[RMDB]
RNA sequence: GGGAACGACUCGAGUAGAGUCGAAAAGAUAUGGAUUCCUUACGCAAGGCUCGGUGGUCGGAAACGACCACCAGCUGAUGACCGUACUGGGAAUCCUAAGUCAAACGACCGCGUUCGCGCGGUCGAACUGUAUAAUAUACUUCGGUAUAUUAUACAGAAAAGAAACAACAACAACAAC
Reactivity to 2A3 in 0.01 (KOAc 150mM, MgCl2 10mM, bicine 150mM(pH8.5), 24C), signal-to-noise 1, nucleotides 027 to 126: g040a020u050a030u120g030g000a010u020u010c010c000u000u080a000c000g030c070a190a300g070g000c010u200c290g000g000u000g020g010u010c040g020g030a050a010a060c000g000a010c000c000a000c000c010a000g000c000u010g010a010u090g010a030c120c070g000u020a080c250u210g000g020g020a000a000u000c000c010u000a070a030g050u030c080a190a110a190c050g000a010c020c060g040c000g010u050u070c300g030c060g000c050g000g050u000c010g000a000a000
Reactivity to DMS in 0.01 (KOAc 150mM, MgCl2 10mM, bicine 150mM(pH8.5), 24C), signal-to-noise 3, nucleotides 027 to 126: g020a040u010a300u000g000g000a020u000u010c000c010u000u000a000c020g000c070a100a190g000g020c000u010c210g140g010u000g010g030u000c000g010g010a030a070a150c000g020a030c000c000a000c000c010a010g000c010u000g010a090u010g000a090c300c020g010u000a010c300u000g010g010g010a030a000u000c000c010u000a000a080g000u010c020a110a230a180c040g020a010c000c000g020c030g030u000u010c290g020c000g000c020g010g050u000c000g010a010a080
Conditions: 150 mM KOAc, 10 mM MgCl2 and 150 mM bicine (pH 8.5), 24 C. This 177-nucleotide RNA was probed chemically with 2A3 and DMS. 2A3 adducts were read by reverse transcription with SuperScript II with manganese. For DMS, 2,462 sequencing reads were counted. It was measured as part of the RMDB library TTRDES.